The record gives the reactivity of an RNA of 177 nucleotides to 2A3 and DMS. 2A3 adducts were read by reverse transcription with SuperScript II with manganese. As a SHAPE reagent, 2A3 marks flexible, mostly unpaired nucleotides at the ribose 2'-OH. Conditions: 150 mM KOAc, 10 mM MgCl2 and 150 mM bicine (pH 8.5), 24 C.
RNA sequence: GGGAACGACUCGAGUAGAGUCGAAAAGAUGGAUAAUUUGAUAUAUUCAUGUAAUCAAGUCAGGGUAAUUGGGAUAUCCAUCACCUUAAAUAUGAGACUAAAGAUAACUUCCAUGGUUAAUGACAUACACGUAUGGUAACUUCGGUUACCAUACGUGAAAAGAAACAACAACAACAAC
Reactivity to 2A3 in 0.01 (KOAc 150mM, MgCl2 10mM, bicine 150mM(pH8.5), 24C), signal-to-noise 1, nucleotides 027 to 126: g000a000u000g030g000a000u000a060a110u060u030u040g030a030u070a050u000a020u300u110c060a040u090g040u040a060a140u180c090a100a080g190u120c040a000g010g000g000u030a050a070u040u020g010g000g060a040u020a030u010c000c040a000u080c010a000c030c000u030u110a000a110a030u120a060u080g100a060g020a020c060u130a000a140a040g080a090u030a050a120c030u100u040c050c010a040u070g060g000u080u030a100a040u130g000a030c000a020u190a080
Reactivity to DMS in 0.01 (KOAc 150mM, MgCl2 10mM, bicine 150mM(pH8.5), 24C), signal-to-noise 2, nucleotides 027 to 126: g000a030u000g000g010a030u000a000a070u000u010u000g000a060u010a120u000a030u030u000c050a090u000g010u000a060a190u000c200a060a140g010u000c010a050g000g000g010u000a030a080u010u000g010g020g020a090u000a010u000c010c000a000u000c030a140c020c010u000u010a050a100a150u010a030u010g000a160g000a060c060u010a020a180a080g000a090u000a060a080c120u000u010c040c100a060u000g010g030u000u000a030a150u000g000a080c100a090u010a060